[RMDB]
RNA sequence: GGGAACGACUCGAGUAGAGUCGAAAAGAUAUGGAAAUUUACAAGCCUGACCACGUAGCUCGGAAACGAGCUAUAUCAAGGCUGUAUGUUUCCUAAGUCAAAACGCUUAGGCUUCGGCCUAAGCGAACUAUCUUCUACCGUUCGCGGUAGAAGAUAGAAAAGAAACAACAACAACAAC
Reactivity to 2A3 in 0.01 (KOAc 150mM, MgCl2 10mM, bicine 150mM(pH8.5), 24C), signal-to-noise 3, nucleotides 027 to 126: g020a010u080a040u200g000g020a010a000a020u040u050u000a050c050a300a070g000c000c000u040g030a090c060c040a110c300g000u010a010g000c000u020c010g030g050a070a110a050c000g010a000g000c010u000a010u000a010u000c050a010a040g000g000c000u010g010u000a010u010g020u000u000u010c000c000u020a160a010g050u060c050a000a030a190a170c020g000c000u000u000a000g020g000c010u060u080c300g220g000c000c010u010a000a000g000c000g010a010a010
Reactivity to DMS in 0.01 (KOAc 150mM, MgCl2 10mM, bicine 150mM(pH8.5), 24C), signal-to-noise 4, nucleotides 027 to 126: g000a030u000a300u000g000g000a000a000a020u000u000u010a020c020a060a120g020c000c000u000g010a210c300c300a090c210g010u000a000g020c010u000c000g010g000a100a090a280c000g000a010g010c000u000a000u000a070u020c110a140a040g000g020c020u000g000u000a010u000g000u000u000u000c000c000u010a060a140g010u000c040a050a110a120a190c020g010c000u000u010a000g000g000c000u000u000c300g020g010c000c000u000a000a000g000c010g010a010a070
Source information
The record gives the reactivity of an RNA of 177 nucleotides to 2A3 and DMS. The DMS profile rests on 3,923 reads. Conditions: 150 mM KOAc, 10 mM MgCl2 and 150 mM bicine (pH 8.5), 24 C.